[RMDB]
RNA sequence: GGGAACGACUCGAGUAGAGUCGAAAAUGGACCGGAUAGGAGAACAGCGUCAGCACGUCGACCGGUGCCUGCCCGGCCGCCACCACCAUGGACGUCUGCCGACCGCCGUAGGAAUGUCCCCCGGCGACCGGGUGAUGACGUUCGCGUCAUCACCCGGAAAAGAAACAACAACAACAAC
Reactivity to 2A3 in 0.01 (KOAc 150mM, MgCl2 10mM, bicine 150mM(pH8.5), 24C), signal-to-noise 2, nucleotides 027 to 126: u100g010g020a060c030c000g010g010a020u100a100g070g090a090g020a030a030c030a000g000c000g100u070c070a010g060c050a050c130g080u060c000g000a080c050c070g000g020u080g190c000c010u040g000c000c000c000g000g000c000c000g050c000c000a010c000c000a000c000c000a020u090g080g000a000c040g040u000c040u070g030c000c000g010a040c000c000g000c000c010g060u060a100g000g190a060a100u100g060u040c000c010c000c000c010g010g030c020g000a040
Reactivity to DMS in 0.01 (KOAc 150mM, MgCl2 10mM, bicine 150mM(pH8.5), 24C), signal-to-noise 1, nucleotides 027 to 126: u060g000g000a230c030c050g000g010a030u030a200g020g000a270g000a110a000c060a000g020c090g090u050c060a090g040c030a100c110g070u000c020g000a060c010c000g000g000u020g000c000c060u020g000c030c000c070g000g030c010c000g020c020c030a160c090c080a090c000c040a190u020g000g030a030c050g000u000c090u010g000c000c000g000a140c020c000g010c010c000g030u000a240g000g000a000a150u030g020u020c050c000c000c270c000g000g000c040g000a080
Structure probing data (2A3 and DMS) for a 177-nucleotide construct. For DMS, 939 sequencing reads were counted.